[RMDB]
RNA sequence: GGGAACGACUCGAGUAGAGUCGAAAAACAGGAUCUUCCCACAGCGGGGCAUGAAGUUUCUGGUCACUUUGAAGGCCGCCGGGAUAGCCUGCUUAUUAUUAAUAACUUGCGCCGCUAGGACAAUUUCAUCGAAACCAUUAAUGUUAUGUCCGACUACCCUUGUUUCCUGAUUCGUCAGGAAACAAGGAAAAGAAACAACAACAACAAC
Reactivity to 2A3 in 0.01 (KOAc 150mM, MgCl2 10mM, bicine 150mM(pH8.5), 24C), signal-to-noise 1, nucleotides 027 to 156: a000c080a120g020g020a100u020c100u000u030c000c010c000a010c000a010g010c000g000g030g060g000c000a000u020g090a060a140g000u040u080u080c060u040g000g000u020c040a050c160u180u110u210g140a070a090g010g010c010c000g000c020c060g060g000g000a030u070a040g060c000c000u000g000c000u030u030a040u080u020a040u050u180a300a100u050a100a100c000u030u020g020c070g130c020c000g030c060u030a040g010g000a000c000a110a300u020u030u050c010a050u090c080g160a110a050a100c070c030a060u140u220a080a000u160g000u000u040a010u030g010u000c000c000g030a060c020u160a110c000
Structure probing data (2A3) for a 207-nucleotide construct. For 2A3 the reverse transcriptase was SuperScript II with manganese. The RNA was probed in 150 mM KOAc, 10 mM MgCl2 and 150 mM bicine (pH 8.5) at 24 C.